[RMDB]
RNA sequence: GGGAACGACUCGAGUAGAGUCGAAAACUUCAGGCAAAGCAAUCUUCAAAGCUGGAGACUUCAACCCGGUCUUCAUUUGGUCACUCCAUCCAGGGUUCUCGACGCGACAAUUGAUGAUGAUUGAAAGGUAUAGGAACUUAUUCGUAAGUUCCUAUACAAAAGAAACAACAACAACAAC
Reactivity to DMS in 0.01 (KOAc 150mM, MgCl2 10mM, bicine 150mM(pH8.5), 24C), signal-to-noise 9, nucleotides 027 to 126: c050u000u000c070a060g010g010c060a080a080a120g010c050a070a060u010c040u000u010c060a060a100a130g010c160u000g000g000a040g010a040c030u000u000c120a070a130c050c030c040g000g000u000c010u000u000c020a050u010u000u010g020g010u000c080a060c060u010c030c030a050u000c050c050a100g010g000g000u000u000c030u000c040g010a090c090g010c040g010a090c070a040a070u000u000g010a100u000g010a080u000g000a080u000u000g000a100a100a100g000
Reactivity to 2A3 in 0.01 (KOAc 150mM, MgCl2 10mM, bicine 150mM(pH8.5), 24C), signal-to-noise 4, nucleotides 027 to 126: c000u070u060c040a050g050g020c030a030a030a070g010c020a040a080u040c030u100u050c080a090a070a070g040c050u020g030g000a010g020a030c010u050u030c110a070a090c000c010c010g010g000u010c000u040u000c010a050u060u080u140g030g000u040c020a020c050u030c010c020a060u030c030c020a040g060g010g000u080u010c010u010c030g040a030c020g010c000g070a050c030a070a070u090u070g040a060u060g010a020u070g030a040u110u090g080a130a070a050g120